[RMDB]
RNA sequence: GGGAACGACUCGAGUAGAGUCGAAAAAAAACCAAUAUUACUACCAUCGGUCCUCACCACUAGAUCGGUGUUAUGCUUUGUUGGGAUAGCAGGCCGUGCCAGUUGGACAGCCAAGGUCCACCUCUGGAUUUAGCAGUUUGUUCGCAAACUGCUAAAUAAAAGAAACAACAACAACAAC
Reactivity to 2A3 in 0.01 (KOAc 150mM, MgCl2 10mM, bicine 150mM(pH8.5), 24C), signal-to-noise 4, nucleotides 027 to 126: a010a000a000a000c100c010a100a040u130a050u090u130a060c040u060a040c000c020a040u050c010g020g010u040c020c030u070c050a110c040c000a040c110u080a020g010a120u010c030g030g010u010g030u040u030a090u110g060c040u070u080u050g030u030u060g040g030g010a040u070a060g100c070a040g050g050c000c010g010u040g060c000c000a040g060u060u040g050g000a010c030a020g080c060c020a040a030g080g020u020c000c020a010c000c030u000c010u010g020g030
Reactivity to DMS in 0.01 (KOAc 150mM, MgCl2 10mM, bicine 150mM(pH8.5), 24C), signal-to-noise 3, nucleotides 027 to 126: a050a040a040a080c010c020a080a060u000a050u030u020a060c070u000a120c140c010a020u020c030g000g020u000c020c050u000c070a070c100c060a030c070u010a060g000a030u020c010g000g020u000g000u020u010a030u020g010c050u000u010u010g010u020u000g000g010g000a130u020a060g010c060a140g020g000c030c020g000u000g000c010c020a080g010u000u020g010g010a040c020a100g010c080c110a060a080g010g020u010c020c030a050c180c060u000c030u000g000g020
Record summary: Structure probing data (2A3 and DMS) for a 177-nucleotide construct. For 2A3, 2,263 sequencing reads were counted. Values cover nucleotides 27 to 126. For DMS the reverse transcriptase was MarathonRT.